[RMDB]
RNA sequence: GGGAACGACUCGAGUAGAGUCGAAAACAGAUAAGAAAAGACCGAGAGGUUCAAGGUUAUAGGGCAGAAAGCGGGGGACAGCAGUACUAAACAUUCCCUGUGGCUGAGACGAAGGUAGUACUCCAACAAAACGAGUACUAGUUCGCUAGUACUCGAAGGUACACUCUUAGUUCGCUAAGAGUGUACCAAAAGAAACAACAACAACAAC
Reactivity to DMS in 0.01 (KOAc 150mM, MgCl2 10mM, bicine 150mM(pH8.5), 24C), signal-to-noise 2, nucleotides 027 to 156: c060a210g040a180u020a100a100g020a070a120a130a100g010a070c030c010g020a140g000a240g000g000u000u000c030a050a040g000g000u000u010a090u000a060g010g010g020c010a050g070a050a030a050g030c040g000g010g000g020g040a040c040a060g020c060a060g010u000a180c040u020a020a070a040c060a170u000u000c000c000c030u000g030u000g040g000c040u000g000a130g000a080c050g010a050a040g020g010u000a080g030u000a050c030u000c010c030a010a090c080a110a070a110a090c000g010a010g040u000a010c000u000a010g000u000u010c300g010c010u000a020g000u000a020c020u010c000g010a000a030
Reactivity to 2A3 in 0.01 (KOAc 150mM, MgCl2 10mM, bicine 150mM(pH8.5), 24C), signal-to-noise 3, nucleotides 027 to 156: c100a030g070a070u210a240a020g060a060a110a020a010g040a020c030c030g030a030g010a030g160g010u070u060c040a030a020g010g000u020u050a080u110a160g010g000g050c020a020g040a070a070a010g020c040g000g010g000g000g000a000c000a010g000c010a000g040u040a030c050u080a050a110a050c020a040u050u040c000c000c020u030g020u040g040g000c040u040g020a010g000a060c080g030a020a010g040g010u010a020g020u030a050c030u030c080c030a030a030c030a050a160a020a050c030g000a000g000u010a010c000u000a010g000u010u040c140g000c160u010a000g010u000a000c000u000c010g000a010a000

Chemical mapping of a 207-nucleotide RNA with DMS and 2A3. The reactions ran in a buffer of 150 mM KOAc, 10 mM MgCl2 and 150 mM bicine (pH 8.5), at 24 C. DMS adducts were read by reverse transcription with MarathonRT. The 2A3 profile rests on 2,338 reads. It was measured as part of the RMDB library M2RFPK. For DMS, 2,689 sequencing reads were counted.